[RMDB]
About this RNA
The record gives the reactivity of an RNA of 177 nucleotides to 2A3 and DMS. Conditions: 150 mM KOAc, 10 mM MgCl2 and 150 mM bicine (pH 8.5), 24 C. For DMS the reverse transcriptase was MarathonRT.

RNA sequence: GGGAACGACUCGAGUAGAGUCGAAAAUUCUGGGCUGUAGUGCGCUAUGCCGAUCGGGUGUCCGCACUAAGUUCGGCAUCAAUAUGGUGACCUCCCGGGAGCGGGGGACCACCAGGUUGCCUAAGGAGAUUGUAUUCUUCUUCGGAAGAAUACAAUCAAAAGAAACAACAACAACAAC
Reactivity to 2A3 in 0.01 (KOAc 150mM, MgCl2 10mM, bicine 150mM(pH8.5), 24C), signal-to-noise 4, nucleotides 027 to 126: u020u020c010u020g010g020g000c010u040g070u300a000g000u000g000c010g000c080u060a010u080g020c030c030g300a300u240c190g130g010g000u020g000u000c030c010g000c000a000c000u020a020a000g000u010u020c000g000g000c010a000u010c000a050a170u080a060u180g010g000u000g000a040c000c000u020c030c030c000g030g090g030a140g200c070g000g010g010g000g020a030c060c000a010c000c000a000g000g030u010u020g010c010c000u020a070a040g130g020a100
Reactivity to DMS in 0.01 (KOAc 150mM, MgCl2 10mM, bicine 150mM(pH8.5), 24C), signal-to-noise 6, nucleotides 027 to 126: u000u000c000u000g010g010g000c010u000g030u000a020g010u010g010c020g010c160u000a030u000g010c000c010g000a160u010c210g020g010g030u000g010u010c300c030g000c000a010c010u000a050a020g010u000u000c020g010g000c070a010u000c030a060a070u000a100u000g010g020u000g010a060c020c000u000c000c000c000g000g000g020a100g010c020g010g000g000g000g010a010c020c000a010c000c010a020g000g030u000u000g000c000c000u000a080a090g010g020a170